[RMDB]
RNA sequence: GGGAACGACUCGAGUAGAGUCGAAAAACAGUGGGAUGUGCAAAGGUUCACAGCUUGACAGGAUUGAUGCCCUAAUUCUCUGUUGUUGCCUUAAUUCUUUGCCUCCAACUAGAGCAUCAUAUUGUCAAGUACAGCUCCUAUUCGUAGGAGCUGUACUAAAAGAAACAACAACAACAAC
Reactivity to 2A3 in 0.01 (KOAc 150mM, MgCl2 10mM, bicine 150mM(pH8.5), 24C), signal-to-noise 1, nucleotides 027 to 126: a000c010a020g010u090g010g070g040a030u040g090u120g000c020a050a000a000g030g050u090u130c160a070c070a080g000c100u070u090g010a010c010a000g040g030a100u040u040g000a070u100g000c000c010c040u080a100a070u070u040c190u030c000u000g070u010u010g070u020u030g130c000c050u050u110a060a060u300u080c010u090u030u000g010c070c000u000c000c000a020a000c020u040a050g010a020g110c010a010u070c000a020u050a070u100u110g080u100c020a010
Reactivity to DMS in 0.01 (KOAc 150mM, MgCl2 10mM, bicine 150mM(pH8.5), 24C), signal-to-noise 2, nucleotides 027 to 126: a050c150a010g020u000g000g010g010a040u000g020u010g000c030a020a030a040g010g010u010u000c180a120c270a090g020c060u000u000g000a020c030a020g020g000a120u000u010g010a030u010g020c010c030c020u010a060a120u000u000c050u000c020u000g020u000u000g010u010u000g000c050c050u010u000a050a070u000u000c010u000u000u000g010c020c000u000c030c030a040a050c040u000a050g000a070g000c030a020u010c030a060u000a150u010u000g000u010c060a050

An RNA of 177 nucleotides, treated with 2A3 and DMS and read out base by base.
DMS (dimethyl sulfate) methylates the pairing face of unpaired adenines and cytosines.